[RMDB]
RNA sequence: GGGAACGACUCGAGUAGAGUCGAAAACAUGCAGGCGUCUGGUGCUAGCCGUGCAGCGCCAGGGUCAGCACUGCGUGCUGAGGCGGCGGAAGCGCCGCUGUCACGCCCGGCGAUUGGGCUACACGACGCAGGAGCGGAGCUUCGGUUUCGUUCUUGCAAAAGAAACAACAACAACAAC
Reactivity to 2A3 in 0.01 (KOAc 150mM, MgCl2 10mM, bicine 150mM(pH8.5), 24C), signal-to-noise 5, nucleotides 027 to 126: c010a010u040g000c010a000g000g000c000g000u000c000u020g000g000u010g000c010u010a030g000c020c040g080u080g000c020a000g000c000g000c000c000a010g010g010g020u130c020a010g000c020a020c010u050g000c020g010u000g000c020u060g030a030g020g000c000g000g000c000g000g040a070a030g110c010g000c000c000g000c000u000g010u000c010a010c030g000c000c000c000g000g050c050g070a100u070u120g020g000g000c000u020a010c070a010c030g060a010c040
Reactivity to DMS in 0.01 (KOAc 150mM, MgCl2 10mM, bicine 150mM(pH8.5), 24C), signal-to-noise 7, nucleotides 027 to 126: c030a050u030g010c060a050g010g000c010g000u000c000u000g000g020u000g000c040u000a100g020c020c060g020u010g010c110a030g000c000g010c010c000a020g000g000g000u050c020a060g000c010a050c010u020g000c100g010u000g010c050u000g010a220g000g000c000g000g000c000g000g010a150a100g000c010g020c010c000g010c000u000g000u000c040a080c180g010c000c010c010g010g000c100g000a110u020u010g000g000g000c210u030a030c070a070c080g010a130c140